[RMDB]
RNA sequence: GGGAACGACUCGAGUAGAGUCGAAAACAUCAGCAGGGCCCUGGCAUGCCGAUAAUGGGAGCUUUGUGUUGCUGGGAGCCGGGAAGCCCAGUGGAGCCCAGACCUUGGCGGUGCCCACGCAGAGAGCGUGGGCAUCCAUAUUCGUAUGGAUGCCCACAAAAGAAACAACAACAACAAC
Reactivity to DMS in 0.01 (KOAc 150mM, MgCl2 10mM, bicine 150mM(pH8.5), 24C), signal-to-noise 9, nucleotides 027 to 126: c080a080u010c060a090g020c040a110g010g010g010c030c030c030u000g010g010c050a070u000g020c030c010g000a060u010a070a130u000g000g000g010a100g010c070u000u000u010g020u000g010u000u010g010c020u000g010g010g000a100g010c020c030g000g000g010a150a100g020c020c010c020a060g010u000g010g010a140g010c020c010c020a060g000a090c160c080u000u000g010g010c030g010g010u000g000c020c010c030a090c090g010c040a070g000a110g000a120g010c150
Reactivity to 2A3 in 0.01 (KOAc 150mM, MgCl2 10mM, bicine 150mM(pH8.5), 24C), signal-to-noise 9, nucleotides 027 to 126: c010a050u120c040a010g040c020a030g010g020g030c010c030c010u040g040g030c050a050u210g050c030c010g100a090u120a160a080u170g030g010g040a090g050c020u090u180u160g160u080g060u140u150g030c020u030g020g030g010a030g050c050c040g040g030g010a090a020g010c000c010c000a010g010u060g070g060a030g000c010c000c000a020g030a060c000c020u040u060g050g030c020g040g040u090g010c010c010c010a060c070g030c030a010g060a010g010a010g120c080

Description: The record gives the reactivity of an RNA of 177 nucleotides to DMS and 2A3. The reactions ran in a buffer of 150 mM KOAc, 10 mM MgCl2 and 150 mM bicine (pH 8.5), at 24 C. It was measured as part of the RMDB library OK2TRN. For DMS the reverse transcriptase was MarathonRT.